The record gives the reactivity of an RNA of 177 nucleotides to DMS and 2A3. For 2A3, 8,346 sequencing reads were counted. The data come from the RNA Mapping Database (RMDB), library TTRDEL. The RNA was probed in 150 mM KOAc, 10 mM MgCl2 and 150 mM bicine (pH 8.5) at 24 C.
RNA sequence: GGGAACGACUCGAGUAGAGUCGAAAAGAUAUGGAGAGGAUAGGGAGACGUCACGGUCGGAAACGACCGAAGUCGUCGAAGAACUAUCUACCCACCUCCUAAGUCAAAAGUUAGCUUCGGCUAACAACGUUAACCUAUACUUCGGUAUAGGUUAACGAAAAGAAACAACAACAACAAC
Reactivity to DMS in 0.01 (KOAc 150mM, MgCl2 10mM, bicine 150mM(pH8.5), 24C), signal-to-noise 4, nucleotides 027 to 126: g010a070u010a140u000g000g010a030g000a160g000g010a030u000a000g000g010g030a140g000a020c000g030u000c040a190c010g010g010u000c000g010g000a060a050a150c010g030a020c000c000g010a030a050g040u000c010g030u000c000g000a140a130g000a090a100c010u000a160u000c000u000a120c070c040c040a300c220c010u000c000c010u000a090a100g000u010c070a090a050a100a120g010u000u000a000g010c000u010u010c230g040g020c010u010a000a010c000a050a110
Reactivity to 2A3 in 0.01 (KOAc 150mM, MgCl2 10mM, bicine 150mM(pH8.5), 24C), signal-to-noise 2, nucleotides 027 to 126: g040a040u120a100u170g010g010a020g030a000g010g040a010u000a020g030g020g000a060g000a010c000g010u020c020a000c060g010g000u010c000g020g010a050a030a020c000g000a000c000c000g000a070a020g020u040c010g000u000c000g060a240a030g010a000a010c010u000a000u000c010u090a170c040c030c010a070c010c010u000c000c020u040a120a040g100u070c070a050a040a040a140g010u010u000a010g000c010u040u080c300g080g000c010u010a000a000c010a000a010

About this RNA:
2A3 is a SHAPE reagent: it acylates the 2'-hydroxyl of flexible nucleotides of all four kinds. Values cover nucleotides 27 to 126. For 2A3 the reverse transcriptase was SuperScript II with manganese. For DMS the reverse transcriptase was MarathonRT.